RNA sequence: GGGAACGACUCGAGUAGAGUCGAAAAGGAGCCAUUUACGUGGGCAAUUACAAGAUUGUUAACAGACACUUGGCAACUUAUGCAGACUGGGAAAAUGAAGUGUGGCAGUCAUAUCAUAGGGACCUAUUAGUUACCAGAGUUGAUGCCCAUGGGUGUGACCGGGUGAAAAGUUCGCUUUUCACCCGGUAAAAGAAACAACAACAACAAC
Reactivity to 2A3 in 0.01 (KOAc 150mM, MgCl2 10mM, bicine 150mM(pH8.5), 24C), signal-to-noise 1, nucleotides 027 to 156: g010g000a010g000c000c020a040u040u070u090a060c000g010u010g010g010g000c000a000a010u180u150a100c050a130a100g030a300u000u070g030u010u040a190a040c040a030g070a050c000a040c130u120u020g020g120c020a000a110c000u050u000a010u120g080c000a030g000a040c100u060g000g100g030a090a000a090a140u150g030a070a130g010u140g000u090g130g000c010a000g010u020c010a000u110a000u110c040a090u080a040g000g030g000a040c000c000u080a120u190u060a140g130u020u010a030c040c040a020g030a030g090u060u000g010a030u110g030c000c000c000a000u000g010g010g000u120g000u000g030
Structure probing data (2A3) for a 207-nucleotide construct.
It was measured as part of the RMDB library OK3TST.
2A3 adducts were read by reverse transcription with SuperScript II with manganese.
2A3 is a SHAPE reagent: it acylates the 2'-hydroxyl of flexible nucleotides of all four kinds.
The RNA was probed in 150 mM KOAc, 10 mM MgCl2 and 150 mM bicine (pH 8.5) at 24 C.